[RMDB]
RNA sequence: GGGAACGACUCGAGUAGAGUCGAAAACGGCGGCACCGGCGGCGCCGGCGGCCCGGGCGGCCACGGCGGCAGCGUUCUAUCCGGCCCGGUUGGCGACAGUGGCAACGGUGGUGCCGGCGGGGACGGCCGCGGUCAAUUCCUUCGGGAAUUGACCGCGAAAAGAAACAACAACAACAAC
Reactivity to 2A3 in 0.01 (KOAc 150mM, MgCl2 10mM, bicine 150mM(pH8.5), 24C), signal-to-noise 1, nucleotides 027 to 126: c020g090g000c000g000g030c010a010c030c010g160g000c060g010g060c000g050c010c010g000g040c050g050g080c010c020c000g000g120g100c050g040g000c010c030a070c010g020g110c060g000g010c060a050g180c000g030u120u080c040u120a080u110c000c000g240g000c170c020c000g010g000u070u070g070g020c010g030a100c120a180g080u060g150g020c020a040a000c030g160g300u000g100g000u070g000c000c000g000g000c060g010g010g000g000a000c010g000g030c030